Chemical mapping of a 177-nucleotide RNA with 2A3 and DMS. For 2A3 the reverse transcriptase was SuperScript II with manganese.

RNA sequence: GGGAACGACUCGAGUAGAGUCGAAAAGUAAGCAAAGACGUAAUAACCGUCAUGGUUAGUAAAUUGAGCGCACGCCGUAAGAAAUGCAAACGCGUUAUGAUUCAGAACACAUGGUGCGCUAUUAUAACGUAAUUUAUCAGUUCGCUGAUAAAUUACGAAAAGAAACAACAACAACAAC
Reactivity to 2A3 in 0.01 (KOAc 150mM, MgCl2 10mM, bicine 150mM(pH8.5), 24C), signal-to-noise 3, nucleotides 027 to 126: g030u050a020a020g050c060a130a040a040g050a010c040g050u090a130a040u060a110a100c040c010g050u070c040a060u070g060g000u050u050a020g020u110a020a090a200u110u210g070a010g000c000g000c010a000c030g080c020c010g000u010a040a010g050a130a120a030u120g000c020a180a080a080c090g000c010g050u040u030a120u080g080a050u050u100c090a020g020a130a000c100a000c010a130u100g080g010u020g000c010g000c010u000a020u010u070a050u030a050a010
Reactivity to DMS in 0.01 (KOAc 150mM, MgCl2 10mM, bicine 150mM(pH8.5), 24C), signal-to-noise 4, nucleotides 027 to 126: g020u010a070a110g010c090a060a070a110g010a070c130g000u000a080a070u010a020a030c110c000g010u000c180a100u010g010g010u000u000a030g000u000a040a060a080u000u010g020a070g020c000g010c020a020c050g000c170c120g000u000a070a050g010a090a090a050u000g010c060a050a110a130c220g010c040g010u000u010a060u010g000a090u020u010c100a050g010a100a060c100a050c080a090u010g010g020u000g000c030g020c020u000a010u010u010a050u000a080a150
The reactions ran in a buffer of 150 mM KOAc, 10 mM MgCl2 and 150 mM bicine (pH 8.5), at 24 C. DMS adducts were read by reverse transcription with MarathonRT.